[RMDB]
RNA sequence: GGGAACGACUCGAGUAGAGUCGAAAACUCAGUGGGAUGAGAGCCGCGUUUCCCCUUACCCGGGUAACAAGACACAGGGCGCACAGACUGGGUAGACUGAUCCAAGGUUAUACUCCGGCCCCAUAUGCUGUUAGAUUAAAUUCGUUUAAUCUAACAGAAAAGAAACAACAACAACAAC
Reactivity to DMS in 0.01 (KOAc 150mM, MgCl2 10mM, bicine 150mM(pH8.5), 24C), signal-to-noise 9, nucleotides 027 to 126: c030u000c030a100g020u000g010g010g010a130u010g000a100g010a110g010c020c030g020c120g010u000u000u000c010c000c010c090u000u010a080c120c100c220g010g010g010u000a040a050c090a100a110g010a110c100a060c120a080g000g010g010c050g010c070a060c110a090g010a100c040u000g010g000g010u000a030g000a050c050u000g000a080u010c100c110a090a150g000g000u000u000a080u010a080c040u000c020c020g010g010c030c010c010c050a080u000a070u010g010
Reactivity to 2A3 in 0.01 (KOAc 150mM, MgCl2 10mM, bicine 150mM(pH8.5), 24C), signal-to-noise 6, nucleotides 027 to 126: c020u020c030a030g020u080g040g050g010a100u070g030a070g000a020g110c020c020g020c020g010u010u030u020c010c020c000c000u030u070a050c010c000c000g000g000g020u040a090a040c070a120a030g100a040c050a010c020a110g060g030g020c040g020c030a050c010a050g140a080c020u040g000g020g020u020a020g030a030c030u050g040a060u050c040c010a040a030g040g010u060u060a100u030a190c030u020c020c000g040g000c000c000c010c000a050u170a090u180g040

Annotation:
Source: RMDB library OK2TST, as collected in RNAgym. Structure probing data (DMS and 2A3) for a 177-nucleotide construct. The DMS profile rests on 16,154 reads. Reactivities are rounded to 0.1 and cut off at 0 and 3. 2A3 adducts were read by reverse transcription with SuperScript II with manganese. For DMS the reverse transcriptase was MarathonRT. For 2A3, 12,520 sequencing reads were counted.